The data come from the RNA Mapping Database (RMDB), library TTRINS. Chemical mapping of a 177-nucleotide RNA with DMS and 2A3. The reactions ran in a buffer of 150 mM KOAc, 10 mM MgCl2 and 150 mM bicine (pH 8.5), at 24 C. Values cover nucleotides 27 to 126. For 2A3, 24,104 sequencing reads were counted. DMS adducts were read by reverse transcription with MarathonRT.
RNA sequence: GGGAACGACUCGAGUAGAGUCGAAAAGAUAUGGAUAGUUGUCAGUUCCUUACCCUGCUCGACGACGAGCUUCGGAAACGAAGCUCAUCAGAGCAGGUAAGGAACUUGGAUUUACUAUCCUAAGUCAGUUCUAAAGAUAGUUCGCUAUCUUUAGAACAAAAGAAACAACAACAACAAC
Reactivity to DMS in 0.01 (KOAc 150mM, MgCl2 10mM, bicine 150mM(pH8.5), 24C), signal-to-noise 6, nucleotides 027 to 126: g000a060u010a300u000g010g010a010u000a000g010u000u000g000u000c010a040g010u000u000c000c000u010u000a010c160c050c070u000g000c000u000c000g010a120c300g010a020c040g000a010g020c000u000u000c000g000g000a110a130a250c000g020a010a010g010c000u000c000a020u000c010a150g000a000g010c000a020g000g000u000a000a000g000g000a000a000c000u000u010g020g010a020u000u010u000a010c010u000a010u000c000c000u000a030a120g010u010c060a180
Reactivity to 2A3 in 0.01 (KOAc 150mM, MgCl2 10mM, bicine 150mM(pH8.5), 24C), signal-to-noise 4, nucleotides 027 to 126: g040a040u090a060u240g010g000a000u010a010g020u000u020g010u010c010a010g000u010u010c010c000u010u000a050c140c040c030u020g020c000u040c030g270a300c150g010a020c040g010a060g010c010u000u000c000g030g020a040a060a050c010g000a000a010g000c000u010c000a000u020c000a000g000a010g000c000a000g000g010u000a000a000g000g000a000a000c000u000u050g010g000a000u080u150u020a000c000u000a000u010c000c000u000a130a010g020u010c050a040